[RMDB]
RNA sequence: GGGAACGACUCGAGUAGAGUCGAAAACUUCAUCUGGCCACGCUUUGAAGCCCACGUGAAGGACACUCUGAAUGAUCUGCCGAUUGAGGUGAUAGAGCUGGCACAGGAGAUGACACCUCCAAUGGUGAUCACAGAACGUUUUCGAACGUUCUGUGAUAAAAGAAACAACAACAACAAC
Reactivity to DMS in 0.01 (KOAc 150mM, MgCl2 10mM, bicine 150mM(pH8.5), 24C), signal-to-noise 3, nucleotides 027 to 126: c030u000u000c000a040u000c030u010g020g010c020c010a040c220g030c040u010u000u000g010a150a300g000c010c010c020a080c120g010u020g010a050a100g010g000a050c030a050c100u020c120u010g000a110a070u000g000a080u000c020u000g000c130c000g010a120u000u000g010a110g010g000u010g010a250u000a100g010a030g010c020u010g000g000c000a060c030a060g000g000a060g010a040u010g000a160c020a040c020c010u010c040c150a100a090u010g000g040u010g000
Reactivity to 2A3 in 0.01 (KOAc 150mM, MgCl2 10mM, bicine 150mM(pH8.5), 24C), signal-to-noise 3, nucleotides 027 to 126: c010u030u040c010a040u010c030u010g000g000c000c010a070c160g010c030u010u070u070g090a080a020g000c000c010c000a030c030g090u080g060a120a060g050g020a020c010a010c040u290c120u140g130a210a140u110g060a220u020c010u080g030c020c010g130a150u090u150g050a130g010g000u040g000a020u090a060g020a010g000c010u020g000g050c080a070c020a050g040g030a020g010a010u040g020a010c000a010c020c000u030c080c050a060a070u220g000g050u090g050